[RMDB]
RNA sequence: GGGAACGACUCGAGUAGAGUCGAAAAUGUCCAAUUGGCAGCUUUUGGGUCUAUCCAAGCAAGUCCACAAGGACUAACCAUUAUUAUGCAAGCCUUAAUUAUUGGAGAGACAAAGCUAAUAAGGUUAGGUCAAUGAAAGAUUCGUCUUUCAUUGACCAAAAGAAACAACAACAACAAC
Reactivity to DMS in 0.01 (KOAc 150mM, MgCl2 10mM, bicine 150mM(pH8.5), 24C), signal-to-noise 3, nucleotides 027 to 126: u020g010u000c010c010a110a300u020u010g000g000c050a260g020c020u000u000u000u030g010g000g010u040c130u090a140u040c000c000a030a040g000c120a110a090g020u080c000c000a100c300a140a230g020g000a040c030u020a050a080c010c000a080u010u030a000u030u000a000u040g000c000a130a300g010c060c020u000u000a070a170u120u060a180u040u000g010g000a140g000a060g000a120c040a040a120a120g010c000u000a040a060u000a000a010g000g010u000u000a020
Reactivity to 2A3 in 0.01 (KOAc 150mM, MgCl2 10mM, bicine 150mM(pH8.5), 24C), signal-to-noise 8, nucleotides 027 to 126: u100g020u000c000c000a010a100u080u070g010g010c000a010g010c020u090u110u050u130g020g000g070u150c120u120a190u070c020c000a000a000g000c040a050a020g040u060c010c000a050c040a070a140g020g000a010c000u010a010a000c000c000a110u020u050a040u050u030a060u230g040c040a020a090g040c000c010u110u120a170a110u110u150a130u140u210g060g010a110g000a000g010a110c070a070a060a000g020c010u020a000a020u000a000a040g060g000u010u090a030
Structure probing data (DMS and 2A3) for a 177-nucleotide construct. The RNA was probed in 150 mM KOAc, 10 mM MgCl2 and 150 mM bicine (pH 8.5) at 24 C.